An RNA of 207 nucleotides, treated with 2A3 and read out base by base.

RNA sequence: GGGAACGACUCGAGUAGAGUCGAAAAUUAAUGAAGCAAAUCUCCAAACGCCAACGAUGAGCGUUUCGCAAUCGCAGCUUAAGGCUUUUGCCGAGGCUGCUUGAGCCUUGUUACCAAAGAAAAGCCGAAAACCCAAAUGUCUUCGGACAUUUGGGAACUAUCUAGAUGCGUUCGCGCAUCUAGAUAGAAAAGAAACAACAACAACAAC
Reactivity to 2A3 in 0.01 (KOAc 150mM, MgCl2 10mM, bicine 150mM(pH8.5), 24C), signal-to-noise 1, nucleotides 027 to 156: u230u120a000a070u210g080a100a000g060c020a000a070a100u030c080u070c000c000a020a020a000c000g040c000c000a080a120c060g210a220u110g040a070g050c000g040u010u020u040c000g010c100a010a010u070c080g030c040a020g020c040u110u180a100a020g040g060c010u170u110u270u300g000c000c000g000a020g010g000c010u010g000c000u030u030g000a000g000c010c010u000u000g030u080u070a050c050c040a060a060a000g070a020a060a030a010g120c050c010g120a070a080a100a110c000c000c000a000a000a000u010g010u000c010u020u050c210g110g000a000c000a000u000u000u000g000g000g000a000a000
The RNA was probed in 150 mM KOAc, 10 mM MgCl2 and 150 mM bicine (pH 8.5) at 24 C. For 2A3, 586 sequencing reads were counted. Values cover nucleotides 27 to 156.